RNA sequence: GGGAACGACUCGAGUAGAGUCGAAAAAUAAAGUGCCCUUGGGUACAAGAAAGAUGUAUCUCCAGCUGUUGAUAAGAGGGGGAAGCCUUUCUCUUCCACCUCGCCAAAAUUUUCAAAACUCCUGAUACUCGAGACUAUAUUUCGAUAUAGUCUCGAGAAAAGAAACAACAACAACAAC
Reactivity to DMS in 0.01 (KOAc 150mM, MgCl2 10mM, bicine 150mM(pH8.5), 24C), signal-to-noise 2, nucleotides 027 to 126: a090u000a070a100a060g030u000g000c010c030c010u010u000g040g010g020u000a040c040a060a210g000a070a050a100g000a090u000g000u020a040u030c010u000c040c020a110g010c110u000g000u000u000g000a080u010a050a080g010a050g030g000g000g000g000a040a030g020c300c090u020u030u030c100u000c000u000u000c000c000a060c000c000u000c010g020c180c050a040a030a030a100u030u000u040u020c030a020a030a060a120c110u000c010c020u000g010a090u010a170
Reactivity to 2A3 in 0.01 (KOAc 150mM, MgCl2 10mM, bicine 150mM(pH8.5), 24C), signal-to-noise 3, nucleotides 027 to 126: a010u200a030a090a010g110u050g030c000c000c000u030u080g030g010g000u040a020c000a030a050g090a200a140a000g160a070u090g000u070a040u010c050u030c010c000a030g010c050u080g050u150u090g090a130u100a220a040g000a000g040g010g000g000g000a020a030g010c000c040u100u240u090c080u000c030u030u020c000c000a020c000c000u000c000g060c000c020a030a120a050a040u050u130u050u120c080a080a050a060a110c080u040c010c010u040g020a020u040a110

Chemical mapping of a 177-nucleotide RNA with DMS and 2A3. Reactivities are given for positions 27 through 126. DMS adducts were read by reverse transcription with MarathonRT. 2A3 adducts were read by reverse transcription with SuperScript II with manganese.